Structure probing data (2A3) for a 177-nucleotide construct. Source: RMDB library RFM100, as collected in RNAgym. Conditions: 150 mM KOAc, 10 mM MgCl2 and 150 mM bicine (pH 8.5), 24 C. For 2A3 the reverse transcriptase was SuperScript II with manganese.
RNA sequence: GGGAACGACUCGAGUAGAGUCGAAAACAUUACCUGCAAGCAAGACGCAAAAUUAAUAGAACAUCACCAUACUUGUGGCUUUCUUGCAAGUCGUGCAGUUGCUGCCUCAAGCUUGCUGCCUCCCUUUCCUCCUGGAGCUCUUCGGAGCUCCAGGAGGAAAAGAAACAACAACAACAAC
Reactivity to 2A3 in 0.01 (KOAc 150mM, MgCl2 10mM, bicine 150mM(pH8.5), 24C), signal-to-noise 1, nucleotides 027 to 126: c000a000u100u240a080c000c000u000g000c000a000a000g000c000a010a010g060a000c040g000c020a000a030a000a120u300u300a020a170u100a020g110a060a030c090a120u210c000a020c060c020a090u150a230c110u050u000g000u000g000g030c020u000u000u000c000u030u120g000c000a000a000g020u040c090g000u000g000c000a010g000u070u050g190c090u000g020c010c080u120c160a050a000g030c000u100u190g000c000u010g000c010c000u000c000c000c110u010u010u000